[RMDB]
RNA sequence: GGGAACGACUCGAGUAGAGUCGAAAAAAGCCGGAGUUGCAGGCCGAGGCGCCGCUGGCCUCGUAAAAAGCGGCACAAAAGUAAUUGCCAACAAUUACGACUACGCUCUGGCUGCUUAAUUGACGGCCACGUCGAACCGGUUCACGCCUGAUAGACCCCUUAUGUACCGGUUCGCCGGUACAUAAGGAAAAGAAACAACAACAACAAC
Reactivity to DMS in 0.01 (KOAc 150mM, MgCl2 10mM, bicine 150mM(pH8.5), 24C), signal-to-noise 2, nucleotides 027 to 156: a090a030g000c030c030g000g030a060g030u000u000g030c030a060g000g000c030c040g020a170g000g030c020g000c020c010g050c020u010g020g000c070c050u010c080g010u000a060a000a020a070a010g000c020g010g090c120a260c070a080a050a070a140g000u000a010a020u000u000g020c100c140a140a120c020a100a060u000u000a040c000g020a120c000u000a030c050g000c020u000c010u000g040g000c030u000g040c050u000u020a110a180u000u000g000a120c000g020g000c020c010a090c070g040u000c030g000a080a130c030c000g010g020u010u000c060a100c020g000c020c040u000g040a230u000a160g010a160c040c070
Reactivity to 2A3 in 0.01 (KOAc 150mM, MgCl2 10mM, bicine 150mM(pH8.5), 24C), signal-to-noise 2, nucleotides 027 to 156: a010a010g090c050c040g050g000a130g060u240u120g040c020a010g020g050c000c000g030a060g020g000c060g020c030c000g020c130u060g030g060c020c010u030c020g070u090a030a040a020a000a010g060c030g000g030c030a010c080a180a160a010a010g010u020a010a040u020u020g020c060c060a080a090c020a080a260u020u000a010c000g020a010c010u140a020c040g050c080u040c070u080g050g000c010u000g000c000u090u090a150a210u240u070g080a120c080g000g070c000c000a070c060g050u060c010g050a070a050c000c010g010g020u050u080c020a020c050g020c000c000u000g000a060u070a060g060a070c020c000

Structure probing data (DMS and 2A3) for a 207-nucleotide construct.
For DMS the reverse transcriptase was MarathonRT.
The reactions ran in a buffer of 150 mM KOAc, 10 mM MgCl2 and 150 mM bicine (pH 8.5), at 24 C.